About this RNA: This 177-nucleotide RNA was probed chemically with DMS and 2A3. DMS adducts were read by reverse transcription with MarathonRT. The RNA was probed in 150 mM KOAc, 10 mM MgCl2 and 150 mM bicine (pH 8.5) at 24 C. In probing experiments dimethyl sulfate is read out at A N1 and C N3, which are open when not base-paired. Reactivities are given for positions 27 through 126. The DMS profile rests on 1,949 reads. The 2A3 profile rests on 877 reads.
RNA sequence: GGGAACGACUCGAGUAGAGUCGAAAAGGGUACAGGUAACAGACAGCACUACAGGGAAACUUUGCUUUUUAGUAGAUGAUGAGUACCAAUUUCCCUAUGUAUUAGGUCAAGGGCAAGACACAUUAGCUGAAGUAAGCGGAUUCGUCCGCUUACUUCAAAAAGAAACAACAACAACAAC
Reactivity to DMS in 0.01 (KOAc 150mM, MgCl2 10mM, bicine 150mM(pH8.5), 24C), signal-to-noise 3, nucleotides 027 to 126: g020g030g030u010a030c070a120g020g010u000a070a080c100a110g010a180c100a060g020c030a050c040u000a030c030a070g000g010g000a040a040a060c070u000u000u020g010c070u000u000u010u010u000a050g010u000a020g010a100u000g010a040u000g010a170g010u000a050c080c040a060a080u020u000u000c000c000c000u010a090u010g010u010a060u010u000a060g000g000u000c030a040a100g000g000g010c060a040a080g000a080c080a050c090a060u000u000a050g020c150
Reactivity to 2A3 in 0.01 (KOAc 150mM, MgCl2 10mM, bicine 150mM(pH8.5), 24C), signal-to-noise 1, nucleotides 027 to 126: g040g010g020u050a010c030a090g070g070u040a150a000c010a040g120a040c010a000g050c010a030c020u020a000c030a000g080g130g120a000a040a010c090u160u140u130g030c020u000u080u020u040u090a060g000u000a040g060a150u000g010a020u000g010a040g010u000a020c000c000a020a030u000u000u020c000c020c000u010a080u080g030u000a060u010u160a040g030g000u070c020a030a040g060g010g020c080a080a020g080a000c020a000c000a100u210u240a060g020c040